The record gives the reactivity of an RNA of 177 nucleotides to 2A3 and DMS. For DMS the reverse transcriptase was MarathonRT. The RNA was probed in 150 mM KOAc, 10 mM MgCl2 and 150 mM bicine (pH 8.5) at 24 C.
[RMDB]
RNA sequence: GGGAACGACUCGAGUAGAGUCGAAAAUGUCCACAGCAUUCCGCUGACCAUCAAUAAGGAAGGUGGGCCCCCCCGUUUCCGUGUACAGGGCACCUGCAGGGAGGGCAGGCAGCUAGCCUGAAGGCUGGCACAUAGGUUAGUUCGCUAACCUAUGUGCAAAAGAAACAACAACAACAAC
Reactivity to 2A3 in 0.01 (KOAc 150mM, MgCl2 10mM, bicine 150mM(pH8.5), 24C), signal-to-noise 1, nucleotides 027 to 126: u090g020u000c000c000a050c000a060g070c080a120u100u030c030c000g030c010u050g070a090c050c000a120u160c050a030a300u150a220a020g060g020a050a030g000g000u030g020g010g040c000c000c050c010c000c000c000g010u000u020u000c030c000g020u010g040u050a080c060a040g050g010g000c010a030c000c010u030g040c020a020g070g000g040a070g000g000g050c020a020g070g000c000a020g040c020u060a050g000c020c020u010g030a080a030g010g000c010u010g100
Reactivity to DMS in 0.01 (KOAc 150mM, MgCl2 10mM, bicine 150mM(pH8.5), 24C), signal-to-noise 3, nucleotides 027 to 126: u010g020u000c010c030a150c100a120g040c100a080u010u000c050c050g010c060u000g010a300c030c040a060u010c120a150a120u010a180a110g010g000a040a220g000g000u000g010g000g000c000c000c000c000c000c000c010g040u000u010u000c020c010g020u010g000u000a080c120a080g000g010g010c050a050c040c030u010g010c050a080g010g000g030a060g000g010g000c020a030g000g000c080a080g020c080u000a040g010c010c010u000g000a070a110g000g010c030u000g000